[RMDB]
RNA sequence: GGGAACGACUCGAGUAGAGUCGAAAAGGUUCCGUCUUCGGACGGAACCAAACAUAGUAUACCCUGUUGCAUGUAUACUAUGAUAUACCGAAAUGCAACGGAAAAUGCCUAGUUUCGACUAGGCAAAACUACCGUUUAGUUUCGACUAAACGGUAGUAAAAGAAACAACAACAACAAC
Reactivity to DMS in 0.01 (KOAc 150mM, MgCl2 10mM, bicine 150mM(pH8.5), 24C), signal-to-noise 5, nucleotides 027 to 126: g010g010u000u010c000c000g010u000c000u000u020c200g020g000a010c000g020g000a000a000c000c000a010a030a090c010a020u000a010g010u000a010u000a000c010c120c110u010g020u000u000g000c000a070u000g000u010a010u000a000c000u000a000u000g000a080u000a080u000a130c010c020g010a060a060a040u000g000c010a010a010c000g000g000a060a070a110a130u000g000c000c000u000a000g000u000u000u020c200g010a020c000u000a000g000g010c000a000a000a060
Reactivity to 2A3 in 0.01 (KOAc 150mM, MgCl2 10mM, bicine 150mM(pH8.5), 24C), signal-to-noise 4, nucleotides 027 to 126: g010g000u000u000c000c000g010u000c010u030u050c180g120g000a000c000g000g000a000a000c010c000a000a000a000c000a000u000a000g000u000a000u000a000c020c030c100u110g000u010u000g000c010a000u010g010u000a000u000a000c000u000a010u020g010a000u030a010u020a070c020c020g030a080a100a040u030g000c000a000a010c010g100g020a140a150a030a060u080g000c000c000u000a000g010u010u030u110c200g050a020c000u000a000g000g000c000a010a000a000